[RMDB]
RNA sequence: GGGAACGACUCGAGUAGAGUCGAAAACGGGCGUAGAUCUUGAGAUAGAUUGAGCGCGCUGUUCGCUGCGCCUAGGUGUUAUCCCUAGGGUGUUAGGCAGUGGAACUGUGACAGCCGUAAGGGAUGACCGGCUAUCUAGCUUCGGUUGGAUAGCCGGAAAAGAAACAACAACAACAAC
Reactivity to 2A3 in 0.01 (KOAc 150mM, MgCl2 10mM, bicine 150mM(pH8.5), 24C), signal-to-noise 9, nucleotides 027 to 126: c010g010g030g000c010g010u030a010g000a030u000c000u010u020g050a040g010a040u030a030g020a020u010u060g040a070g080c050g000c010g010c040u030g020u020u010c020g000c010u010g000c030g100c010c000u010a020g000g020u070g070u230u190a100u130c000c000c000u000a020g020g030g020u060g120u090u090a130g050g000c000a000g000u070g100g070a030a040c010u020g010u020g060a040c020a030g040c010c010g040u080a050a080g070g000g000a040u050g040a030
Reactivity to DMS in 0.01 (KOAc 150mM, MgCl2 10mM, bicine 150mM(pH8.5), 24C), signal-to-noise 9, nucleotides 027 to 126: c050g000g010g020c020g010u010a260g010a010u000c000u010u000g010a170g010a120u020a020g000a020u010u010g010a120g010c030g000c030g010c040u010g000u010u000c010g000c010u010g000c010g000c010c000u000a020g000g010u010g010u030u040a070u020c170c000c000u010a050g000g000g020u010g010u030u040a150g010g020c000a000g010u000g010g020a010a190c010u000g010u010g010a090c120a090g010c000c010g010u010a070a080g010g000g000a050u010g000a190
Overview: Structure probing data (2A3 and DMS) for a 177-nucleotide construct. For 2A3, 23,384 sequencing reads were counted. The RNA was probed in 150 mM KOAc, 10 mM MgCl2 and 150 mM bicine (pH 8.5) at 24 C.